[RMDB]
RNA sequence: GGGAACGACUCGAGUAGAGUCGAAAAAGUCUACUUUUCGAAGUAGACUGUGCUCCCACUUGAUCGAGGUCUCACCGAGUCAUUGCCCACGACACUCGGGCGUAAUAGAUUGGUUCGCCAAUCUAAAGACGACUUAUCACUUCGGUGAUAAGUCGUCAAAAGAAACAACAACAACAAC
Reactivity to DMS in 0.01 (KOAc 150mM, MgCl2 10mM, bicine 150mM(pH8.5), 24C), signal-to-noise 2, nucleotides 027 to 126: a040g000u000c000u000a000c000u000u010u000u020c140g020a020a040g000u000a010g000a010c010u000g030u010g010c170u000c010c000c020a120c170u010u020g010a070u000c060g020a120g030g020u000c030u000c050a070c050c010g000a010g030u010c040a080u020u000g020c000c000c030a090c140g010a090c080a050c040u000c020g010g000g010c110g020u000a090a110u000a000g010a020u000u000g000g000u000u030c200g040c000c000a000a010u000c010u000a010a090a120
Reactivity to 2A3 in 0.01 (KOAc 150mM, MgCl2 10mM, bicine 150mM(pH8.5), 24C), signal-to-noise 1, nucleotides 027 to 126: a000g010u000c010u000a000c000u070u050u000u270c250g070a010a010g000u000a000g000a010c000u000g030u070g020c020u040c000c020c010a020c040u090u220g060a170u100c010g030a000g000g090u030c040u000c010a030c040c010g010a010g000u040c050a030u040u170g120c010c030c000a040c060g070a020c000a000c000u090c000g020g070g010c060g000u050a100a100u020a120g010a020u000u030g000g050u040u030c160g080c060c000a000a000u000c000u000a000a050a020